[RMDB]
RNA sequence: GGGAACGACUCGAGUAGAGUCGAAAACCCGGGGAAACCUGGAGGAAGUCCGACGAGAUCGCGGCUGGGGCUUAGGACCCCACUCCUGCGAGACAGGAGUAAUCCUAAACAGGGUUUUCACCCUUCCGUACAUUGUCAUGUUCGCAUGACAAUGUACAAAAGAAACAACAACAACAAC
Reactivity to 2A3 in 0.01 (KOAc 150mM, MgCl2 10mM, bicine 150mM(pH8.5), 24C), signal-to-noise 2, nucleotides 027 to 126: c010c000c010g000g000g000g020a020a010a010c000c030u020g000g020a030g050g050a040a010g030u060c010c000g020a160c030g060a200g020a230u170c040g000c050g000g000c000u000g010g000g000g000c020u040u040a040g050g100a210c000c000c000c010a000c000u010c000c000u000g020c060g220a180g020a090c000a000g000g000a000g010u010a000a020u020c000c020u000a010a020a000c010a010g000g050g000u030u020u050u050c120a270c030c010c010u140u000c090c060
Reactivity to DMS in 0.01 (KOAc 150mM, MgCl2 10mM, bicine 150mM(pH8.5), 24C), signal-to-noise 2, nucleotides 027 to 126: c010c000c020g040g010g010g010a010a020a040c010c000u000g030g000a110g010g000a110a060g010u000c000c000g000a120c070g010a220g020a190u000c040g020c040g000g010c100u000g000g000g000g010c040u000u000a030g000g000a080c000c000c000c010a050c010u000c000c000u000g000c010g020a100g000a280c000a040g000g010a000g000u000a030a060u000c000c000u010a020a020a040c060a020g010g010g000u000u020u010u010c040a240c030c010c020u000u010c110c130